[RMDB]
RNA sequence: GGGAACGACUCGAGUAGAGUCGAAAACGCUGGGCGUAUCCCUGGAUAUCACGACAUGAACUUUACCUACUGAAGCGCGCACGGUAGGUAAAGUUCAACAGCGUGAUAAUCAGAACUACGCCUGUGCUGAAGCGCGCACGGCAACCGAAAGGUGCGACUGUGCGCAUUAGUUCGCUAAUGCGCACAGAAAAGAAACAACAACAACAAC
Reactivity to DMS in 0.01 (KOAc 150mM, MgCl2 10mM, bicine 150mM(pH8.5), 24C), signal-to-noise 3, nucleotides 027 to 156: c100g060c020u000g010g010g050c010g020u000a020u000c070c070c000u020g020g040a070u000a020u000c000a030c010g020a090c040a290u020g020a030a030c010u000u000u000a010c000c000u000a020c000u010g020a070a050g040c020g010c030g040c010a300c080g000g010u000a020g030g010u000a010a000a000g030u000u000c020a030a080c140a140g000c000g040u020g000a010u000a010a060u010c010a030g010a080a090c060u000a020c010g010c030c000u010g030u010g000c020u000g030a170a070g000c000g030c000g020c030a210c000g010g030c020a120a250c000c000g000a090a100a140g020g030u000g020c010g010a180
Reactivity to 2A3 in 0.01 (KOAc 150mM, MgCl2 10mM, bicine 150mM(pH8.5), 24C), signal-to-noise 5, nucleotides 027 to 156: c040g000c010u040g010g000g000c000g020u020a090u120c090c030c000u000g040g020a020u010a000u010c010a000c030g250a210c160a290u220g000a010a000c010u000u000u000a000c000c000u010a000c000u040g050a210a030g030c000g000c010g000c010a020c010g010g000u000a000g000g000u000a000a000a000g000u000u000c000a000a010c020a010g030c000g010u000g000a000u000a000a100u020c010a000g020a060a030c050u020a000c010g010c000c000u020g040u030g000c010u070g040a140a050g000c010g000c000g000c010a020c020g070g000c030a080a100c020c010g050a090a030a010g020g000u020g000c000g030a060
The data come from the RNA Mapping Database (RMDB), library RNAMAK. Structure probing data (DMS and 2A3) for a 207-nucleotide construct. The 2A3 profile rests on 9,441 reads. The reactions ran in a buffer of 150 mM KOAc, 10 mM MgCl2 and 150 mM bicine (pH 8.5), at 24 C. For 2A3 the reverse transcriptase was SuperScript II with manganese.